[RMDB]
RNA sequence: GGGAACGACUCGAGUAGAGUCGAAAACCGCAGGGUCGCCCAGGAAUGGCGGGACCCCACUCUGCAGGGUCCGCGUUCCAUCCUUUCUUACCUGAUGGCCGGCAUGGUCCCAGCCUCCUCGCUGGCGGAUACACACUUUCUUCGGAAAGUGUGUAUCAAAAGAAACAACAACAACAAC
Reactivity to DMS in 0.01 (KOAc 150mM, MgCl2 10mM, bicine 150mM(pH8.5), 24C), signal-to-noise 2, nucleotides 027 to 126: c030c000g010c150a090g000g010g020u000c020g020c020c030c050a130g010g000a040a030u010g000g010c020g020g030g000a040c020c000c010c020a080c090u000c090u020g000c060a170g000g000g010u010c010c020g000c030g000u010u000c010c010a110u010c010c090u000u000u010c050u000u000a100c090c030u000g010a060u000g000g030c070c050g010g010c030a080u000g010g010u000c050c000c020a110g030c010c040u000c030c040u000c050g030c040u000g020g000c100g020
Reactivity to 2A3 in 0.01 (KOAc 150mM, MgCl2 10mM, bicine 150mM(pH8.5), 24C), signal-to-noise 2, nucleotides 027 to 126: c000c010g030c040a030g040g040g000u030c020g050c000c010c050a010g060g040a100a060u160g300g260c060g030g050g030a030c000c010c030c000a060c010u300c090u170g030c100a100g000g000g040u020c000c000g040c020g030u040u000c000c000a040u020c010c010u100u120u090c020u100u110a060c000c040u060g020a100u080g140g070c020c000g040g010c010a080u130g010g050u040c000c020c000a030g030c010c000u070c000c000u030c010g060c010u050g020g000c040g050